[RMDB]
RNA sequence: GGGAACGACUCGAGUAGAGUCGAAAAGAAAGAAAGUACUGAAAGUAUUGUGGGAAAUAAUGUGUAAAUCAUUGACCGUUCCAGCGCUGGUAAGAAUAAAAUUUUAGUCCAGACACCACCAGUAUAACCAAUCUAGUGACCUUCGGGUCACUAGAAACUCUUUGAGUAUGUUCGCAUACUCAAAGAGAAAAGAAACAACAACAACAAC
Reactivity to 2A3 in 0.01 (KOAc 150mM, MgCl2 10mM, bicine 150mM(pH8.5), 24C), signal-to-noise 2, nucleotides 027 to 156: g030a030a060a020g060a070a150a030g000u010a030c000u010g030a030a080a090g090u140a200u290u110g000u000g000g030g020a000a020a000u020a000a000u020g000u010g000u000a010a010a000u020c000a000u000u010g000a010c000c020g020u190u100c080c030a070g080c000g000c010u000g010g010u040a030a000g020a030a010u180a110a200a090a080u060u130u020u030a000g010u000c000c000a000g020a020c010a010c030c000a000c010c000a020g000u010a020u030a050a010c050c050a040a050u000c000u000a000g000u000g000a000c000c000u040u030c290g070g000g000u000c000a000c000u000a010g010a000a000a010
Reactivity to DMS in 0.01 (KOAc 150mM, MgCl2 10mM, bicine 150mM(pH8.5), 24C), signal-to-noise 1, nucleotides 027 to 156: g010a070a090a130g010a090a110a090g000u000a110c020u030g000a100a160a300g000u000a020u000u000g030u010g010g030g000a090a180a030u000a010a000u010g010u010g000u000a140a100a300u000c010a090u010u010g000a060c020c040g000u000u030c050c090a210g070c050g050c010u000g000g020u000a080a080g000a150a050u000a040a040a060a300u000u000u000u000a120g010u000c020c010a080g010a170c120a130c030c020a060c000c010a060g020u010a000u000a050a080c080c110a040a110u000c010u000a030g000u000g000a120c000c010u000u000c300g060g000g010u000c010a000c000u000a010g000a000a050a110
Structure probing data (2A3 and DMS) for a 207-nucleotide construct. For DMS, 1,573 sequencing reads were counted. In probing experiments dimethyl sulfate is read out at A N1 and C N3, which are open when not base-paired. For DMS the reverse transcriptase was MarathonRT. The reactions ran in a buffer of 150 mM KOAc, 10 mM MgCl2 and 150 mM bicine (pH 8.5), at 24 C.